[RMDB]
RNA sequence: GGGAACGACUCGAGUAGAGUCGAAAAACAGCGAAAGGGACAAGACUUCGAACAUUAUAGCAGUUAGUAGUUGCCUAAACCCAUUGCAAUAUAUGGGACAGUAGAGGUCGCAAGCCUAUACUGUGCGAAAAGUCGCAAGGUUUCGACCUUGCGACAACGUAUAUCCGCGAUUCGUCGCGGAUAUACGAAAAGAAACAACAACAACAAC
Reactivity to 2A3 in 0.01 (KOAc 150mM, MgCl2 10mM, bicine 150mM(pH8.5), 24C), signal-to-noise 3, nucleotides 027 to 156: a010c030a000g040c020g060a180a050a080g050g020g020a020c030a080a050g050a050c020u030u060c100g070a080a040c040a090u130u110a080u160a120g090c070a020g020u030u050a010g020u060a010g010u050u080g050c000c020u070a100a070a060c000c000c010a000u020u030g020c000a020a000u020a000u010a000u160g010g000g000a000c000a000g010u000a010g000a020g000g010u090c080g000c130a000a050g010c000c000u010a020u010a000c000u010g020u040g010c020g060a000a000a050a070g010u000c000g000c000a000a000g030g020u000u020u190c210g060a030c000c010u010u000g000c010g000a000c000a000a000
Reactivity to DMS in 0.01 (KOAc 150mM, MgCl2 10mM, bicine 150mM(pH8.5), 24C), signal-to-noise 1, nucleotides 027 to 156: a070c050a060g020c020g000a050a060a080g000g010g040a130c020a090a060g020a210c010u000u000c080g000a200a030c030a070u020u000a140u010a130g000c050a070g000u020u000a070g030u000a190g000u000u000g050c000c050u000a050a080a300c010c000c000a040u000u000g010c070a150a110u020a080u000a000u000g010g000g010a070c010a030g010u000a000g020a050g080g090u000c020g050c300a100a210g000c000c000u040a010u020a000c020u000g050u000g030c060g000a040a020a070a150g030u000c000g020c010a000a020g030g040u010u000u010c300g000a030c000c010u020u000g000c000g000a000c040a000a050
Overview
This 207-nucleotide RNA was probed chemically with 2A3 and DMS. The DMS profile rests on 2,079 reads. It was measured as part of the RMDB library M2RFPK. The RNA was probed in 150 mM KOAc, 10 mM MgCl2 and 150 mM bicine (pH 8.5) at 24 C. DMS adducts were read by reverse transcription with MarathonRT.